[RMDB]
RNA sequence: GGGAACGACUCGAGUAGAGUCGAAAAAACUACUUCUUCGGAAGUAGUUAUUGCGUGGGUCUAAUAAGCCCAAGGUGCCUGGUUCGACCCUUGCUGGGCGCAUCACCGACCGAUUCGUCGGUCGGAAGUUAGGCAUAAACUUCGGUUUAUGCCUAACAAAAGAAACAACAACAACAAC
Reactivity to 2A3 in 0.01 (KOAc 150mM, MgCl2 10mM, bicine 150mM(pH8.5), 24C), signal-to-noise 2, nucleotides 027 to 126: a000a010c000u000a000c000u010u010c000u050u060c300g040g000a000a000g000u000a000g000u000u020a150u070u140g020c060g030u060g010g010g000u010c000u030a050a030u070a200a040g010c000c010c010a000a020g130g010u010g000c010c000u010g010g010u050u040c090g060a150c010c010c020u020u050g000c000u010g000g000g000c000g000c010a040u130c070a020c000c010g000a000c010c000g010a030u040u040c250g030u010c000g080g000u000c000g000g000a000a000
Reactivity to DMS in 0.01 (KOAc 150mM, MgCl2 10mM, bicine 150mM(pH8.5), 24C), signal-to-noise 3, nucleotides 027 to 126: a010a000c000u010a010c000u000u000c000u000u010c190g030g010a010a010g010u000a010g010u000u000a010u000u010g000c110g020u010g010g010g010u000c010u000a110a060u010a150a230g000c010c000c000a050a080g020g030u000g010c010c000u000g000g010u000u000c140g010a270c010c010c010u010u000g020c030u010g000g010g000c000g020c050a080u010c190a160c000c000g000a020c000c000g010a020u000u010c140g010u000c000g000g000u000c000g000g010a020a030
The record gives the reactivity of an RNA of 177 nucleotides to 2A3 and DMS. Values cover nucleotides 27 to 126. 2A3 adducts were read by reverse transcription with SuperScript II with manganese. Conditions: 150 mM KOAc, 10 mM MgCl2 and 150 mM bicine (pH 8.5), 24 C.